[RMDB]
RNA sequence: GGGAACGACUCGAGUAGAGUCGAAAAAGUGGCAGGCCGUACGCGGCCUACCACAUGCAAGAGAAGAAGCGUUCAACCAAGCCGUGACAGGCAAGUCAGGGCUUCGGCGGGAAAUUGCUCUUACCAAAAAACCUCCUUUCCUUCGGGAAAGGAGGAAGGAAGAAUACACGUUCGCGUGUAUUCUUCCAAAAGAAACAACAACAACAAC
Reactivity to 2A3 in 0.01 (KOAc 150mM, MgCl2 10mM, bicine 150mM(pH8.5), 24C), signal-to-noise 1, nucleotides 027 to 156: a000g000u000g000g000c010a000g000g010c000c020g030u040a030c230g010c000g100g000c000c000u010a010c000c000a000c000a000u090g040c040a070a140g050a080g030a120a020g010a090a010g030c010g020u010u020c000a020a020c000c000a010a000g010c000c010g170u000g020a000c000a040g140g150c110a130a000g020u020c000a010g100g000g000c020u010u050c120g000g010c020g010g040g080a080a030a050u180u230g000c020u000c020u030u110a090c040c030a000a050a000a000a020a060c010c000u010c000c020u000u000u000c030c000u040u060c160g080g010g000a020a000a000g000g000a000g000g000a000a000
Annotation:
The record gives the reactivity of an RNA of 207 nucleotides to 2A3. 2A3 adducts were read by reverse transcription with SuperScript II with manganese. Source: RMDB library M2RFPK, as collected in RNAgym.